[RMDB]
RNA sequence: GGGAACGACUCGAGUAGAGUCGAAAAUGGUUUGAGGAGAAUAAGGAUUGGUACGACCCAAUAGAAAACUCAAAAUAUUAUGUCAUGUUGGCUAAAAUGGGACCUAUUGUACGACGUGCUUUAUUGAAUGCUAUUGAGUUCGGAAACCUUAUGGUUGACGUAGUGUCGUUUUCGAACGACACUACGUAAAAGAAACAACAACAACAAC
Reactivity to DMS in 0.01 (KOAc 150mM, MgCl2 10mM, bicine 150mM(pH8.5), 24C), signal-to-noise 1, nucleotides 027 to 156: u000g000g000u010u000u000g010a110g010g000a230g030a050a110u040a050a050g000g020a200u010u030g020g010u000a100c080g000a090c060c010c010a070a120u010a090g010a080a100a100a080c010u000c050a010a020a120a110u000a100u000u000a170u000g010u000c020a110u030g000u000u000g010g000c010u010a030a040a140a150u000g030g010g000a060c070c000u010a210u000u000g000u000a060c060g000a070c010g030u000g000c060u010u000u010a060u010u010g010a040a080u000g010c000u020a070u000u000g000a070g020u010u010c010g020g010a160a030a080c050c010u000u010a080u010g050g000u000u000g000
Reactivity to 2A3 in 0.01 (KOAc 150mM, MgCl2 10mM, bicine 150mM(pH8.5), 24C), signal-to-noise 2, nucleotides 027 to 156: u120g010g120u050u060u030g020a000g020g030a070g010a100a090u100a010a100g020g020a050u150u040g000g010u080a070c100g010a070c070c000c030a010a010u020a030g100a010a140a020a010c020u000c020a010a010a020a010u150a130u210u080a100u090g070u080c140a000u020g070u100u050g100g000c010u070a140a000a000a040u050g000g050g000a050c010c000u050a070u070u020g020u020a050c050g000a000c010g000u010g050c000u220u200u160a140u110u070g020a040a020u080g030c010u000a000u050u070g020a120g000u110u010c060g010g000a000a060a000c020c000u070u160a160u160g060g010u020u040g030
Record summary: An RNA of 207 nucleotides, treated with DMS and 2A3 and read out base by base. The reactions ran in a buffer of 150 mM KOAc, 10 mM MgCl2 and 150 mM bicine (pH 8.5), at 24 C. Values are in units of 0.01, from 0 to 300, in steps of 10.